[RMDB]
RNA sequence: GGGAACGACUCGAGUAGAGUCGAAAACUUUGAACGUUCGCGUUCAAAGAAACCUCUAAGCAGAUUCGCGAGGACGACGCUGCGGAGCGCGUUUGCCAAUAAAAAGCGUAGGCUUCGGCCUACGCAAGGUGAUCUAAGUGUUCGCACUUAGAUCACCAAAAGAAACAACAACAACAAC
Reactivity to 2A3 in 0.01 (KOAc 150mM, MgCl2 10mM, bicine 150mM(pH8.5), 24C), signal-to-noise 3, nucleotides 027 to 126: c000u040u010u010g000a010a010c010g020u070u060c250g000c000g110u000u000c010a000a000a010g000a060a020a000c000c010u000c050u090a130a120g000c050a040g110a300u260u270c110g000c040g040a030g000g030a040c010g000a000c000g000c020u070g020c020g040g030a010g000c220g000c010g030u040u020u050g260c010c010a080a060u170a140a140a020a010a010g030c000g000u000a000g000g020c000u020u050c160g090g010c000c000u010a000c000g000c000a010a000
Reactivity to DMS in 0.01 (KOAc 150mM, MgCl2 10mM, bicine 150mM(pH8.5), 24C), signal-to-noise 2, nucleotides 027 to 126: c010u000u000u000g010a010a000c000g020u000u010c260g010c020g020u010u010c000a000a010a000g020a120a080a130c060c010u000c030u020a120a200g040c040a190g010a110u000u000c060g000c090g000a140g000g030a300c050g000a040c050g030c000u010g020c010g000g020a040g070c020g020c030g000u010u000u000g000c020c070a030a090u050a060a090a050a070a120g010c000g000u000a000g010g000c010u010u000c210g040g000c000c000u000a000c000g020c000a000a000